[RMDB]
Structure probing data (DMS and 2A3) for a 177-nucleotide construct. High DMS reactivity at an A or C suggests that its Watson-Crick edge is free. Values are in units of 0.01, from 0 to 300, in steps of 10. Conditions: 150 mM KOAc, 10 mM MgCl2 and 150 mM bicine (pH 8.5), 24 C. It was measured as part of the RMDB library OK2TST. DMS adducts were read by reverse transcription with MarathonRT.
RNA sequence: GGGAACGACUCGAGUAGAGUCGAAAAGGUGUUUAUUGACAUCAAUUGGAUGGAAUGGGCGGGGCAAACAGGAGCCAGCAACUGGUUACAUAGCAAUCGCAAAAGGUCAAUACGCGCCCGUAGCAUAAGUAGUCUAUUCUUUCGAGAAUAGACUACUAAAAGAAACAACAACAACAAC
Reactivity to DMS in 0.01 (KOAc 150mM, MgCl2 10mM, bicine 150mM(pH8.5), 24C), signal-to-noise 4, nucleotides 027 to 126: g000g010u000g010u000u010u010a050u010u000g000a040c000a100u010c040a080a160u010u010g020g040a080u010g010g010a060a090u000g000g010g020c070g030g010g000g020c050a040a080a120c160a060g000g020a120g010c040c010a030g020c110a070a100c110u000g000g000u000u000a050c080a080u010a070g010c050a040a030u000c050g020c080a040a050a080a160g020g000u010c020a030a030u000a040c070g010c040g010c010c000c070g000u010a080g000c150a090u000a050
Reactivity to 2A3 in 0.01 (KOAc 150mM, MgCl2 10mM, bicine 150mM(pH8.5), 24C), signal-to-noise 2, nucleotides 027 to 126: g050g000u030g040u040u060u050a060u020u090g020a000c020a030u090c050a110a160u110u060g150g010a060u070g030g080a130a040u040g010g000g060c060g020g040g000g000c040a050a110a010c050a080g110g030a020g030c000c030a000g020c030a060a090c070u000g000g010u010u010a010c020a010u050a010g070c020a040a090u050c070g000c050a040a090a020a010g050g000u010c000a010a020u010a040c010g010c000g000c030c000c010g050u080a010g020c040a050u010a170